[RMDB]
Description
The record gives the reactivity of an RNA of 177 nucleotides to 2A3. High 2A3 reactivity points to a flexible backbone, as in loops and unpaired stretches. Conditions: 150 mM KOAc, 10 mM MgCl2 and 150 mM bicine (pH 8.5), 24 C. Values cover nucleotides 27 to 126. The 2A3 profile rests on 392 reads.
RNA sequence: GGGAACGACUCGAGUAGAGUCGAAAAGUCUGGAACUCCUGACCUCUGGUGAGCCACCUGCCUUGGCCUCCCAAAGUGCUGGAAUUACAGGCCUGAGGUACCAUGCCCAGCAAUUUUUUUUUAAGUGGGGUAUACGAGUCUUCGGACUCGUAUACCCAAAAGAAACAACAACAACAAC
Reactivity to 2A3 in 0.01 (KOAc 150mM, MgCl2 10mM, bicine 150mM(pH8.5), 24C), signal-to-noise 1, nucleotides 027 to 126: g060u000c000u000g030g030a000a100c050u000c080c000u120g170a260c000c000u020c000u000g090g000u170g100a030g070c000c000a000c000c020u110g110c000c060u080u080g030g010c030c040u010c010c000c000a020a010a020g130u120g040c000u000g000g000a130a050u290u050a210c080a020g000g000c000c000u100g070a060g000g050u110a120c020c020a030u150g020c020c000c030a000g010c000a010a000u000u080u000u000u000u000u000u110u110a240a030g010u060g100